The record gives the reactivity of an RNA of 207 nucleotides to 2A3 and DMS. The reactions ran in a buffer of 150 mM KOAc, 10 mM MgCl2 and 150 mM bicine (pH 8.5), at 24 C. The DMS profile rests on 3,871 reads. High 2A3 reactivity points to a flexible backbone, as in loops and unpaired stretches. DMS adducts were read by reverse transcription with MarathonRT.

RNA sequence: GGGAACGACUCGAGUAGAGUCGAAAAUUCACAAUAGCAAAGACUUGGAACCAACCCAAAUGUCCAUCAAUGAUAGACUGGAUUAAGUAAACGUGGCACAUAUACACCAUGGAAUACUGUGCAGCCAUAAAAAAGGAUGAGGUCAUGUCCUUUGUAAUAUCCUAUCACCAUUCGUGGUGAUAGGAUAAAAAGAAACAACAACAACAAC
Reactivity to 2A3 in 0.01 (KOAc 150mM, MgCl2 10mM, bicine 150mM(pH8.5), 24C), signal-to-noise 4, nucleotides 027 to 156: u060u020c030a020c050a110a090u100a110g040c000a030a030a030g010a040c070u070u100g020g010a060a080c030c030a000a080c010c010c020a010a090a100u100g010u000c000c000a020u060c040a070a140u190g070a050u080a100g090a070c060u030g030g020a020u100u120a130a020g060u060a080a080a010c050g020u020g010g010c090a020c010a070u150a020u100a120c020a050c060c020a010u060g060g030a090a020u100a120c040u030g010u030g060c030a010g040c020c010a060u140a070a130a010a000a010a000g010g000a030u080g040a010g010g080u080c030a030u090g010u040c020c000u000u020u030g040u020a080a020
Reactivity to DMS in 0.01 (KOAc 150mM, MgCl2 10mM, bicine 150mM(pH8.5), 24C), signal-to-noise 2, nucleotides 027 to 156: u000u000c030a080c050a100a140u000a050g010c060a120a060a120g000a060c030u010u000g020g020a070a160c040c020a080a100c010c000c010a040a120a120u000g000u010c000c030a100u000c030a070a140u010g020a130u000a050g010a060c010u000g000g010a090u000u000a050a050g000u000a010a020a160c040g040u010g000g040c020a120c100a120u010a110u010a120c070a080c030c020a030u000g000g010a100a130u000a020c090u000g020u000g000c040a070g040c000c030a120u030a010a050a040a050a050a020g010g010a030u010g000a060g040g010u000c030a080u000g000u000c010c020u000u000u000g010u000a100a180